Source: RMDB library TTRDES, as collected in RNAgym. Structure probing data (2A3 and DMS) for a 177-nucleotide construct. Conditions: 150 mM KOAc, 10 mM MgCl2 and 150 mM bicine (pH 8.5), 24 C. The DMS profile rests on 12,566 reads. 2A3 adducts were read by reverse transcription with SuperScript II with manganese.
RNA sequence: GGGAACGACUCGAGUAGAGUCGAAAAGAUAUGGAGAUGUCAAGGGAGAUCCACAUCGGAAACGAUGUGAGAUCUUUGAUCUUGCAUCUCCUAAGUCAAAAUCUAUCGCAGUUCGCUGCGAUAGAAACUUGUUUAUACUGUUCGCAGUAUAAACAAGAAAAGAAACAACAACAACAAC
Reactivity to 2A3 in 0.01 (KOAc 150mM, MgCl2 10mM, bicine 150mM(pH8.5), 24C), signal-to-noise 4, nucleotides 027 to 126: g000a010u020a000u050g010g000a000g010a000u010g270u300c040a010a000g030g020g010a090g000a000u000c000c000a000c000a010u000c010g000g000a020a000a000c000g000a000u000g000u020g010a030g010a000u000c000u030u090u040g000a000u000c000u010u010g000c000a000u010c000u000c000c000u000a000a000g010u000c000a020a020a030a280u020c000u010a010u000c000g000c010a010g020u080u140c270g120c130u000g000c000g000a000u000a000g000a010a000a000
Reactivity to DMS in 0.01 (KOAc 150mM, MgCl2 10mM, bicine 150mM(pH8.5), 24C), signal-to-noise 4, nucleotides 027 to 126: g000a010u000a050u020g000g000a020g010a010u000g010u020c020a000a010g010g010g000a010g000a020u000c000c000a010c000a010u000c000g020g000a010a010a030c010g010a020u000g000u000g000a060g000a010u000c000u000u000u020g000a020u010c000u000u000g000c000a000u000c000u000c000c000u000a010a050g000u000c010a150a100a150a170u000c000u000a010u000c000g020c000a010g000u010u010c280g030c000u000g000c000g010a010u000a000g000a020a060a120